[RMDB]
RNA sequence: GGGAACGACUCGAGUAGAGUCGAAAAACGUGGUCACCGAGCCGCUCACAAAGCCGGCGCUAGUGGCGGUCGACAUGCGCCCCGCGCGGCGCGGCGAGCGGCUGUUCAAGCUGGCCGCGUCGGCCGCGCCCACCUCCUGUUUCGACAGGAGGUGGGCAAAAGAAACAACAACAACAAC
Reactivity to DMS in 0.01 (KOAc 150mM, MgCl2 10mM, bicine 150mM(pH8.5), 24C), signal-to-noise 2, nucleotides 027 to 126: a080c040g030u000g000g020u000c010a040c080c080g000a110g010c010c000g030c020u020c000a130c140a100a130a230g030c000c020g040g020c000g000c030u010a120g020u000g010g040c060g020g000u010c100g010a080c120a050u000g010c090g010c000c040c060c140g010c050g000c100g010g020c010g040c090g010g010c020g020a020g000c010g000g020c010u000g000u010u030c280a160a140g000c150u000g020g010c000c000g000c000g010u000c020g000g020c030c010g000c120
Reactivity to 2A3 in 0.01 (KOAc 150mM, MgCl2 10mM, bicine 150mM(pH8.5), 24C), signal-to-noise 1, nucleotides 027 to 126: a010c000g000u000g030g000u000c000a010c020c000g000a010g030c020c000g020c030u020c020a130c130a090a270a030g010c010c030g170g020c050g020c020u040a120g000u020g170g000c040g000g060u070c010g050a080c060a170u290g020c070g020c010c020c000c030g000c000g000c120g040g000c030g000c030g020g030c070g020a000g030c000g000g020c010u000g040u040u050c050a040a020g010c040u030g020g000c050c000g060c000g010u020c000g060g060c010c030g070c040
The record gives the reactivity of an RNA of 177 nucleotides to DMS and 2A3. Reactivities are given for positions 27 through 126. It was measured as part of the RMDB library OK2TRN. For 2A3 the reverse transcriptase was SuperScript II with manganese. For 2A3, 1,257 sequencing reads were counted.